RNA sequence: GGGAACGACUCGAGUAGAGUCGAAAACUAGAUACAUGUUUUGAAGCUACAGAAGCAACAUUUAACUUCUUGUUAGAUUUGGCAGGAUUGUUCAGAAUCUUUCUCCGCAAUGCCUAUGUGUACACUUGUACCUAAAAGAGUUCGCUCUUUUAGGUACAAAAGAAACAACAACAACAAC
Reactivity to 2A3 in 0.01 (KOAc 150mM, MgCl2 10mM, bicine 150mM(pH8.5), 24C), signal-to-noise 2, nucleotides 027 to 126: c000u010a010g040a040u090a040c030a010u060g060u000u140u010u090g120a060a010g040c010u010a030c020a060g040a040a000g000c030a040a060c020a080u080u090u120a050a040c010u020u020c010u060u070g060u070u030a030g010a090u080u000u140g010g050c000a000g020g080a080u050u030g030u060u100c040a050g070a090a070u070c050u050u100u000c040u000c000c020g000c010a060a000u090g060c010c010u060a060u130g130u010g040u030a000c040a000c040u020u010
Reactivity to DMS in 0.01 (KOAc 150mM, MgCl2 10mM, bicine 150mM(pH8.5), 24C), signal-to-noise 2, nucleotides 027 to 126: c020u000a110g020a150u010a060c120a030u000g000u000u000u020u000g010a070a070g020c040u000a030c080a020g000a070a040g010c050a130a110c130a090u010u000u000a050a070c010u000u000c090u000u010g010u010u000a010g000a050u010u010u000g000g010c080a050g000g000a070u000u000g000u000u010c150a050g040a050a060u020c100u000u010u000c020u000c050c060g000c090a060a040u000g000c020c010u010a060u000g010u010g000u010a060c130a090c150u000u000

This 177-nucleotide RNA was probed chemically with 2A3 and DMS. For DMS, 1,571 sequencing reads were counted. It was measured as part of the RMDB library 15KREP.